[RMDB]
RNA sequence: GGGAACGACUCGAGUAGAGUCGAAAAUGGCAGUGAUGAUUGAGAAUGUCAUGCACCACUCUGAUUUCGUGCUGAUAACUAUCUCUACCCAUAUUAUAUCUGAGCCUAAAACAGCGCUUCGGCGCUGGUAUGUGGUUUGCUUCGGCAAACCACAUACAAAAGAAACAACAACAACAAC
Reactivity to DMS in 0.01 (KOAc 150mM, MgCl2 10mM, bicine 150mM(pH8.5), 24C), signal-to-noise 1, nucleotides 027 to 126: u000g000g010c060a090g000u000g000a070u000g000a130u000u000g000a080g000a090a150u000g020u000c000a000u010g020c030a020c010c110a110c140u020c220u000g010a050u020u000u030c220g050u000g000c030u030g010a050u020a000a130c180u020a140u000c010u010c020u030a140c100c010c000a160u000a060u010u000a050u000a070u000c030u000g020a180g000c000c010u000a050a030a050a200c020a000g000c020g020c000u000u030c180g090g030c000g010c000u010g010
Reactivity to 2A3 in 0.01 (KOAc 150mM, MgCl2 10mM, bicine 150mM(pH8.5), 24C), signal-to-noise 2, nucleotides 027 to 126: u120g040g000c030a040g060u030g110a040u040g020a040u070u080g010a010g030a030a040u100g000u040c010a040u260g000c010a030c070c010a070c070u080c100u150g170a300u070u160u130c020g020u020g000c000u000g000a030u040a120a070c040u010a050u210c010u000c000u050a080c000c030c010a060u090a040u140u140a150u040a010u070c010u050g050a040g040c000c010u070a080a080a000a020c010a010g000c010g010c030u160u150c220g050g000c030g020c000u010g010